[RMDB]
RNA sequence: GGGAACGACUCGAGUAGAGUCGAAAAUUAAAGGAGGAGGAGGAGUGUGUGUCUUCCCAGCUGCUGAGUAGAACCUCCGCACACACGCGAAAGCUAGGAGCAGCAGCAGUGCGGAAACGGUGAAAAACAUUUUCUUCUCGUUCGCGAGAAGAAAAUGAAAAGAAACAACAACAACAAC
Reactivity to DMS in 0.01 (KOAc 150mM, MgCl2 10mM, bicine 150mM(pH8.5), 24C), signal-to-noise 1, nucleotides 027 to 126: u010u000a060a160a140g000g000a040g010g000a090g000g010a140g030g020a140g010u020g010u000g050u000g000u010c120u000u000c010c030c050a080g000c020u000g000c010u000g000a090g000u000a070g000a080a170c150c000u010c020c030g050c040a080c040a020c070a050c170g020c000g000a030a150a100g000c000u010a120g020g010a130g000c050a100g010c070a060g040c020a100g000u010g000c090g000g000a060a040a040c170g000g020u020g010a050a070a040a030a130
Description
An RNA of 177 nucleotides, treated with DMS and read out base by base. For DMS the reverse transcriptase was MarathonRT. For DMS, 808 sequencing reads were counted. It was measured as part of the RMDB library M2PK90.